[RMDB]
RNA sequence: GGGAACGACUCGAGUAGAGUCGAAAAAGCGCGGCCAGCUCGUCGGCCGUCUCCGCGUAGGCGAUGCUCAACGAGUGCCACCCCUCGGCCGACACCAGCAGCGGACCGGGCCCAGGCCCGCUGCUUACACCAGUAGACUUUUCGAAGUCUACUGGUGAAAAGAAACAACAACAACAAC
Reactivity to 2A3 in 0.01 (KOAc 150mM, MgCl2 10mM, bicine 150mM(pH8.5), 24C), signal-to-noise 2, nucleotides 027 to 126: a000g060c060g000c010g000g010c080c050a030g000c030u070c090g030u000c010g000g020c010c000g010u000c030u010c000c030g080c060g030u160a040g020g000c010g140a170u220g030c060u050c090a150a250c100g010a020g020u160g070c000c030a110c050c010c000c020u110c020g020g000c010c020g000a000c010a020c010c040a000g000c000a000g010c010g000g000a020c000c000g060g050g000c030c030c000a000g000g010c010c000c010g020c000u000g000c010u000u000a000
Reactivity to DMS in 0.01 (KOAc 150mM, MgCl2 10mM, bicine 150mM(pH8.5), 24C), signal-to-noise 4, nucleotides 027 to 126: a060g000c030g010c010g010g030c220c120a190g000c060u000c060g010u000c110g000g000c020c010g010u000c020u010c010c090g020c150g020u000a060g020g010c010g000a100u020g000c010u000c060a120a090c150g000a030g010u000g020c030c020a280c040c000c010c120u000c050g010g010c010c000g010a050c090a080c140c110a020g000c010a010g010c020g010g010a010c010c010g000g030g020c050c020c030a250g000g000c020c010c000g020c010u000g010c010u000u010a100
Chemical mapping of a 177-nucleotide RNA with 2A3 and DMS. The data come from the RNA Mapping Database (RMDB), library OK2TST. For DMS the reverse transcriptase was MarathonRT. The 2A3 profile rests on 2,834 reads. Values cover nucleotides 27 to 126. For 2A3 the reverse transcriptase was SuperScript II with manganese.